Annotation:
This 177-nucleotide RNA was probed chemically with 2A3 and DMS. Values cover nucleotides 27 to 126. 2A3 adducts were read by reverse transcription with SuperScript II with manganese.

RNA sequence: GGGAACGACUCGAGUAGAGUCGAAAAGGUGUGAGACCACGGCACGUCUUGUACUCGUCUAGUAUGGCUAUCUCCAGGUCCUCCGUUUGCUCGGGCACAAAACGGAACUCCGAGACGGUGGCGGCGGCCUCGCACGCCAUUUCGAUGGCGUGCGAGGAAAAGAAACAACAACAACAAC
Reactivity to 2A3 in 0.01 (KOAc 150mM, MgCl2 10mM, bicine 150mM(pH8.5), 24C), signal-to-noise 2, nucleotides 027 to 126: g030g000u030g030u070g070a020g000a040c000c000a000c020g010g040c000a020c060g020u000c010u030u100g020u050a030c000u030c050g040u020c040u060a070g040u050a090u170g000g020c020u060a060u060c030u050c000c070a060g130g040u090c000c000u030c000c010g010u010u110u110g010c020u020c030g020g060g000c040a040c040a080a060a060a000c020g090g040a030a010c030u020c010c000g030a000g030a030c000g070g000u030g040g010c060g020g030c000g020g000
Reactivity to DMS in 0.01 (KOAc 150mM, MgCl2 10mM, bicine 150mM(pH8.5), 24C), signal-to-noise 1, nucleotides 027 to 126: g000g000u000g000u020g000a030g020a180c100c070a060c100g000g000c000a020c060g020u000c030u010u010g000u050a100c040u000c000g020u040c030u000a130g000u000a070u000g000g020c040u000a160u000c030u040c000c000a100g070g020u020c020c000u010c000c000g030u000u000u000g000c010u000c010g000g070g020c180a100c190a110a030a130a040c130g010g000a050a300c250u010c120c050g020a110g060a100c110g000g020u000g040g000c000g000g000c070g060g000